[RMDB]
RNA sequence: GGGAACGACUCGAGUAGAGUCGAAAACGUCUACCACGGAACCCAAAGUGCAUACCGAGCACGAACAUAACUCGUAAAAUAUUGUUUAAAACAAAUAGUUGCAAAUAAUUACAACUAUAGUUUGGCAGCUUAAUGCCAACCUGUUAUCAUUUGUGACCUACAUUUUUGACUUCGGUCAAAAAUGUAGAAAAGAAACAACAACAACAAC
Reactivity to 2A3 in 0.01 (KOAc 150mM, MgCl2 10mM, bicine 150mM(pH8.5), 24C), signal-to-noise 2, nucleotides 027 to 156: c020g020u010c030u110a070c090c000a010c030g020g020a060a050c020c000c000a080a010a100g040u030g000c050a070u090a180c110c020g010a030g020c020a010c020g000a040a020c060a080u070a050a060c060u040c080g090u060a010a090a000a060u080a090u070u050g000u000u110u060a060a130a020a040c010a000a110a040u120a080g010u010u000g040c000a000a000a040u050a090a060u160u110a030c030a060a010c030u080a030u040a250g050u000u040u000g010g000c010a020g010c040u200u300a090a020u100g000c000c000a000a000c010c000u030g030u040u070a080u090c020a060u030u030u020g010u010g040a020c000